[RMDB]
RNA sequence: GGGAACGACUCGAGUAGAGUCGAAAAACGAAGAUCGGCGCGAGCGCCGUCGCGGGCGGCGCGUCCGAUCGGCGCUCGGCGGGCGGCGCGCCCGUCUCGCCAUGCGCGAGGCUCGCGGCGAGCAGCAAUAUUUACCCCAUUUCGAUGGGGUAAAUAUAAAAGAAACAACAACAACAAC
Reactivity to DMS in 0.01 (KOAc 150mM, MgCl2 10mM, bicine 150mM(pH8.5), 24C), signal-to-noise 6, nucleotides 027 to 126: a150c090g000a130a110g010a040u000c010g010g000c040g000c010g010a060g020c010g020c020c010g010u000c180g010c180g010g000g020c010g010g010c040g000c010g000u000c030c030g010a040u010c040g010g010c030g010c100u000c130g010g010c010g000g010g020c010g000g010c070g010c120g010c060c020c030g000u000c000u000c010g020c010c040a090u000g000c070g010c020g000a060g010g000c010u000c040g010c050g010g000c030g000a060g000c040a120g010c090a120
Reactivity to 2A3 in 0.01 (KOAc 150mM, MgCl2 10mM, bicine 150mM(pH8.5), 24C), signal-to-noise 4, nucleotides 027 to 126: a000c060g020a080a040g040a080u050c030g080g010c020g050c020g050a070g170c060g040c100c020g020u030c040g010c040g030g000g010c040g050g070c020g030c020g050u030c010c020g010a020u030c020g000g000c000g020c040u110c090g060g040c010g010g010g000c000g060g020c070g000c020g020c120c010c010g020u010c040u030c000g000c000c010a080u150g020c050g000c010g020a030g070g000c030u030c050g020c020g080g020c030g020a030g020c020a000g020c020a020